RNA sequence: GGGAACGACUCGAGUAGAGUCGAAAAGUGCUGAUUGAAAUUCAUGGGAGCCUCUCCAUAAUGGAUGAACGCCGCGCUAGUACGCGCAGUCGCGACGUAAACGCUCUGUUUUCCCGUUCAGGCCUCAAGUCAUAGGAUAUUUCGAUAUCCUAUGACUAAAAGAAACAACAACAACAAC
Reactivity to DMS in 0.01 (KOAc 150mM, MgCl2 10mM, bicine 150mM(pH8.5), 24C), signal-to-noise 9, nucleotides 027 to 126: g020u000g010c030u000g010a150u000u000g000a090a120a070u000u000c060a040u000g000g010g000a070g010c100c060u010c080u000c010c010a110u000a070a070u000g000g000a040u000g000a100a050c030g020c020c030g010c010g010c020u000a110g010u010a070c220g010c130g010c090a040g010u010c040g020c010g010a020c020g010u000a050a080a100c140g010c020u000c010u000g010u010u000u000u000c000c010c010g010u010u010c120a080g000g010c050c080u010c120a100
Reactivity to 2A3 in 0.01 (KOAc 150mM, MgCl2 10mM, bicine 150mM(pH8.5), 24C), signal-to-noise 8, nucleotides 027 to 126: g050u050g010c020u030g030a200u190u080g040a150a100a070u110u060c040a050u070g050g000g000a030g050c030c030u100c000u000c040c010a050u190a250a060u170g020g000a020u060g030a050a010c020g000c020c000g000c010g000c020u030a050g080u090a070c090g020c010g010c100a010g150u200c040g000c010g010a040c010g020u040a040a100a020c030g000c020u020c010u030g050u040u070u020u010c000c000c010g000u090u070c050a040g030g080c010c030u060c070a040

Description: This 177-nucleotide RNA was probed chemically with DMS and 2A3. It was measured as part of the RMDB library OK2TRN. Values cover nucleotides 27 to 126. For 2A3 the reverse transcriptase was SuperScript II with manganese.